The record gives the reactivity of an RNA of 177 nucleotides to 2A3 and DMS. In probing experiments dimethyl sulfate is read out at A N1 and C N3, which are open when not base-paired. For 2A3 the reverse transcriptase was SuperScript II with manganese.
RNA sequence: GGGAACGACUCGAGUAGAGUCGAAAACGCGCGGUGGACGACAGCGUCCGAUCUGCCGUCUGGGGCCUCCUGCAGCAGCCUGCCGUGCUCGCCCAGCUGCAGACCAAGUACGCGGCGGCGAACCUGCCCGUUCUAGCGGGUUCGCCCGCUAGAACGGAAAAGAAACAACAACAACAAC
Reactivity to 2A3 in 0.01 (KOAc 150mM, MgCl2 10mM, bicine 150mM(pH8.5), 24C), signal-to-noise 2, nucleotides 027 to 126: c010g040c000g020c020g000g050u100g020g010a010c040g030a030c060a060g120c060g070u040c010c010g040a210u040c040u080g000c000c040g030u030c030u040g090g030g080g040c010c030u080c020c000u050g030c010a020g000c000a000g000c000c010u060g040c030c020g050u040g020c060u050c030g010c000c000c000a030g000c000u040g020c010a020g020a090c040c010a140a040g040u020a070c060g030c020g130g000c010g040g010c040g040a040a030c010c010u060g040c040
Reactivity to DMS in 0.01 (KOAc 150mM, MgCl2 10mM, bicine 150mM(pH8.5), 24C), signal-to-noise 2, nucleotides 027 to 126: c130g000c060g020c010g000g020u010g020g010a050c030g030a110c090a120g010c140g010u000c100c080g000a070u010c020u000g010c000c010g010u010c030u020g000g000g000g000c060c030u000c140c030u000g000c020a010g000c040a160g010c040c020u000g010c000c060g000u000g010c040u000c150g010c000c010c050a090g000c000u010g010c020a020g010a210c080c070a040a120g010u010a110c090g000c070g000g010c060g010g010c010g010a020a060c060c030u000g000c130
Overview
Reactivities are given for positions 27 through 126. The RNA was probed in 150 mM KOAc, 10 mM MgCl2 and 150 mM bicine (pH 8.5) at 24 C.